RNA sequence: GGGAACGACUCGAGUAGAGUCGAAAAUCGUCUACGUUCAGCGCCUGCGAUGACACGAUGCUAGAUUUUUGCUCGCCGAUGGCGACUAGCUUGCCGCGGGAUGAUGAACACCGAGAAGUCUGCGCACGCUGGCUUGGGUCCGCUAUGCAGCGCACCGCCCAAGUAUGGCAUUCGUGCCAUACUUGGGAAAAGAAACAACAACAACAAC
Reactivity to 2A3 in 0.01 (KOAc 150mM, MgCl2 10mM, bicine 150mM(pH8.5), 24C), signal-to-noise 2, nucleotides 027 to 156: u040c040g100u040c070u090a070c100g000u000u010c000a000g050c040g000c000c020u040g000c000g160a190u150g100a120c000a040c140g190a140u280g030c010u010a030g000a300u060u040u060u060u280g050c010u060c000g000c000c030g300a230u300g000g000c000g020a040c000u000a010g000c000u060u080g030c030c000g000c030g000g020g000a080u010g030a000u060g000a000a000c030a050c110c010g010a020g000a150a020g090u020c050u070g020c000g050c000a020c070g000c010u030g000g000c030u070u130g080g050g000u050c050c000g080c040u050a060u300g010c020a000g020c000g000c030a040c010c000g090
The record gives the reactivity of an RNA of 207 nucleotides to 2A3. For 2A3 the reverse transcriptase was SuperScript II with manganese. The RNA was probed in 150 mM KOAc, 10 mM MgCl2 and 150 mM bicine (pH 8.5) at 24 C. Reactivities are given for positions 27 through 156.